[RMDB]
RNA sequence: GGGAACGACUCGAGUAGAGUCGAAAAAUCAUUGACGGCGAGGCGCGGAUUGCGGCGGACGGGACCGGCUACGCCCACAACGUCACGCCCGCGAUGACUGACGAUCAGUAUGUCGCGUGUGAGGUCGCGUCGUUAAGGGCUUCGGCCCUUAACGACGAAAAGAAACAACAACAACAAC
Reactivity to 2A3 in 0.01 (KOAc 150mM, MgCl2 10mM, bicine 150mM(pH8.5), 24C), signal-to-noise 1, nucleotides 027 to 126: a020u180c070a030u050u130g090a040c060g000g040c020g040a080g020g040c030g010c020g080g040a090u050u200g060c060g010g010c010g000g000a050c040g050g000g040a000c000c040g010g000c050u090a080c140g010c030c060c000a110c000a070a030c000g030u000c040a020c130g000c000c030c010g000c000g030a010u050g020a080c010u020g000a120c040g280a220u220c000a000g000u110a300u290g040u040c010g050c010g020u070g020u000g040a070g000g150u040c060g000
Reactivity to DMS in 0.01 (KOAc 150mM, MgCl2 10mM, bicine 150mM(pH8.5), 24C), signal-to-noise 1, nucleotides 027 to 126: a040u020c040a080u000u030g030a140c130g060g000c050g020a140g020g010c000g000c070g000g000a140u000u000g010c120g020g000c010g010g020a080c020g010g010g000a060c140c150g000g010c070u000a050c150g000c070c010c010a080c210a090a150c070g030u010c040a160c040g010c040c020c000g010c000g040a000u000g010a010c030u000g000a200c270g010a060u000c030a040g000u000a050u030g020u010c010g010c020g040u020g000u020g010a140g000g010u020c020g010
Source: RMDB library OK2TRN, as collected in RNAgym. This 177-nucleotide RNA was probed chemically with 2A3 and DMS. The reactions ran in a buffer of 150 mM KOAc, 10 mM MgCl2 and 150 mM bicine (pH 8.5), at 24 C.